[RMDB]
RNA sequence: GGGAACGACUCGAGUAGAGUCGAAAAACUCGAGACGAUCGUCGAUCGAGCCGAGACCGAGUCGGUGUCGCCGCCAGCCACGGCGAUCGUCGGCGACGUCGCCGCGAUCAGGGACGAAAUCGAGGCCAGGUCGGUGCGAUUUCGAUCGCACCGACCUAAAAGAAACAACAACAACAAC
Reactivity to 2A3 in 0.01 (KOAc 150mM, MgCl2 10mM, bicine 150mM(pH8.5), 24C), signal-to-noise 1, nucleotides 027 to 126: a000c010u000c050g070a060g000a010c100g050a300u020c000g080u000c000g020a000u040c010g050a100g000c000c030g090a070g000a000c000c040g050a040g000u000c000g060g000u060g000u040c000g000c000c000g140c130c030a090g110c110c000a000c000g000g100c010g000a140u160c040g070u000c000g000g010c000g000a060c000g060u000c000g090c010c070g110c000g020a020u030c000a210g270g000g000a020c030g050a000a130a040u020c020g000a000g020g000c000c000